[RMDB]
RNA sequence: GGGAACGACUCGAGUAGAGUCGAAAACUUUGCUCAGGAGCGAGGGUACACACUUCCAGUGUGCGAUCGUUACAAGGGGUACGGUGUCCCGCUUGCUGACAAGGACGCUAUUCUUCUCUACAACCUCGAUCACCAUGUUGUUCGCAACAUGGUGAUCAAAAGAAACAACAACAACAAC
Reactivity to 2A3 in 0.01 (KOAc 150mM, MgCl2 10mM, bicine 150mM(pH8.5), 24C), signal-to-noise 7, nucleotides 027 to 126: c020u040u020u030g030c050u020c020a020g000g040a010g000c010g020a300g060g030g080u230a020c030a000c000a020c030u300u160c020c030a100g070u020g010u020g070c010g100a180u190c140g060u150u110a030c010a050a090g070g000g000g020u040a030c100g070g010u010g020u040c000c000c010g000c010u010u080g180c000u000g010a010c010a010a000g060g010a060c080g010c090u060a120u090u050c000u050u000c000u010c000u030a050c030a090a090c010c040u040c100
Reactivity to DMS in 0.01 (KOAc 150mM, MgCl2 10mM, bicine 150mM(pH8.5), 24C), signal-to-noise 1, nucleotides 027 to 126: c000u000u000u010g020c120u000c040a040g000g000a050g010c000g010a100g030g000g030u030a000c000a060c000a040c110u000u000c060c100a080g020u000g000u000g000c130g030a100u010c160g000u040u000a030c000a060a050g000g080g020g000u000a040c170g000g000u000g000u030c000c000c040g000c050u000u000g000c040u000g000a150c020a030a000g050g000a060c160g000c120u000a150u000u010c070u000u000c000u000c040u020a080c030a110a150c090c030u000c220